[RMDB]
RNA sequence: GGGAACGACUCGAGUAGAGUCGAAAAUAAAGUACGAGGUCAAUGAGAACAUGUCGGACAUUCCGUUGUCUGACAUUGUGUACCGUGCAGAUGCCCGGAUAUCUGAGUAUUUGCACAUCAACAUAACCGGUAUGAAGUGAUUCGUCACUUCAUACCGAAAAGAAACAACAACAACAAC
Reactivity to DMS in 0.01 (KOAc 150mM, MgCl2 10mM, bicine 150mM(pH8.5), 24C), signal-to-noise 3, nucleotides 027 to 126: u030a050a070a150g000u030a050c070g000a110g020g000u000c030a090a110u010g010a110g000a080a040c050a020u000g000u010c000g040g000a010c000a060u000u070c240c140g000u010u000g000u000c000u000g000a000c010a000u030u040g010u010g000u030a070c080c100g000u000g000c030a010g000a000u000g000c020c000c010g020g000a300u030a090u030c000u000g000a130g000u000a000u000u000u000g000c030a020c030a020u020c160a050a110c090a010u000a060a080c130
Reactivity to 2A3 in 0.01 (KOAc 150mM, MgCl2 10mM, bicine 150mM(pH8.5), 24C), signal-to-noise 8, nucleotides 027 to 126: u100a010a080a020g140u070a050c070g050a060g070g060u100c110a100a120u230g030a070g020a090a010c010a020u010g000u010c000g010g020a010c010a020u280u190c140c130g170u260u030g000u000c000u000g000a000c000a000u030u050g000u000g020u040a050c040c090g000u010g000c010a000g000a010u010g010c000c020c020g000g020a240u280a080u220c030u050g010a000g010u010a010u000u020u010g000c010a010c010a050u130c030a030a210c020a060u150a100a090c070

Notes:
An RNA of 177 nucleotides, treated with DMS and 2A3 and read out base by base. Conditions: 150 mM KOAc, 10 mM MgCl2 and 150 mM bicine (pH 8.5), 24 C. It was measured as part of the RMDB library OK1LIB. For DMS, 5,202 sequencing reads were counted.